[RMDB]
RNA sequence: GGGAACGACUCGAGUAGAGUCGAAAAGCUGUGCCUAGGUAAGCCUAUAUCUGUGCGCACUACAGGCACUAUGUCGCAUCAUGGUCCCUGUGAACUCGAAGCUUGAUGCGACAAGUUUUGAGUGAUCGCAGACACUAUAGGCUUAGUUCGUGAGAGCUAUCGUAGGGUACUUCGGUACCCUACGAUAAAAAGAAACAACAACAACAAC
Reactivity to DMS in 0.01 (KOAc 150mM, MgCl2 10mM, bicine 150mM(pH8.5), 24C), signal-to-noise 1, nucleotides 027 to 156: g020c000u000g010u000g020c040c010u010a040g000g020u000a060a110g020c010c010u000a010u000a020u010c040u010g070u000g000c090g020c090a160c060u000a110c030a090g000g020c110a020c040u000a100u000g010u160c060g040c120a060u000c010a010u010g000g010u000c020c000c000u000g060u000g000a130a030c040u010c000g000a010a100g050c020u000u000g000a130u010g030c190g000a070c000a010a010g020u000u000u010u020g020a050g010u000g000a090u010c020g000c010a090g020a150c170a050c060u000a090u000a010g000g000c000u000u000a040g000u000u000c060g000u030g040a110g010a140g020c070
Reactivity to 2A3 in 0.01 (KOAc 150mM, MgCl2 10mM, bicine 150mM(pH8.5), 24C), signal-to-noise 1, nucleotides 027 to 156: g060c080u040g040u130g110c000c010u040a080g030g030u010a010a000g000c000c000u030a030u030a030u080c000u020g040u000g040c060g000c090a000c010u150a090c010a020g050g000c020a010c030u050a190u080g000u000c020g040c040a060u000c000a000u060g010g020u180c050c000c130u040g070u010g110a050a010c020u070c170g020a070a000g080c010u000u030g000a000u030g060c000g000a010c000a000a000g000u000u000u090u040g030a030g000u000g010a010u010c010g000c030a000g040a040c030a010c170u030a010u030a010g000g000c000u000u010a020g060u060u060c050g020u050g140a140g000a000g020c010